[RMDB]
RNA sequence: GGGAACGACUCGAGUAGAGUCGAAAAGAAAGAAACGCGCGAAAGUAUCUAGAUUCUAAUAAUAAUGAAGAAAGAAUCUUGAGAGUGGUCGAUAGAUACGAAAAAGCGCGGAGACCACUGAAAGAAAGGGUAGUAAUAUCUUCGGAUAUUACUACCCAAAAGAAACAACAACAACAAC
Reactivity to 2A3 in 0.01 (KOAc 150mM, MgCl2 10mM, bicine 150mM(pH8.5), 24C), signal-to-noise 2, nucleotides 027 to 126: g070a010a170a000g040a010a060a000c030g010c000g000c010g040a240a000a000g010u010a010u000c000u000a010g000a060u010u000c000u000a050a100u190a140a070u180a140a050u300g070a010a080g020a010a170a020g000a060a010u030c050u040u140g170a130g000a000g030u000g000g040u030c000g010a000u010a080g000a000u000a000c000g050a050a020a000a190a000g000c020g000c000g000g000a020g000a000c000c000a000c060u050g120a100a120a000g050a050a080a020
Reactivity to DMS in 0.01 (KOAc 150mM, MgCl2 10mM, bicine 150mM(pH8.5), 24C), signal-to-noise 2, nucleotides 027 to 126: g000a090a050a050g030a060a130a160c000g000c020g000c010g020a080a090a100g010u000a000u000c000u000a020g000a050u000u000c000u000a010a100u020a050a190u010a110a160u020g010a100a120g000a050a100a120g000a070a060u020c000u030u010g010a120g020a120g000u010g030g010u000c010g000a150u020a000g010a000u030a000c010g000a090a110a110a130a100g000c030g010c030g050g000a130g000a040c030c000a000c070u010g010a100a100a080g000a060a050a080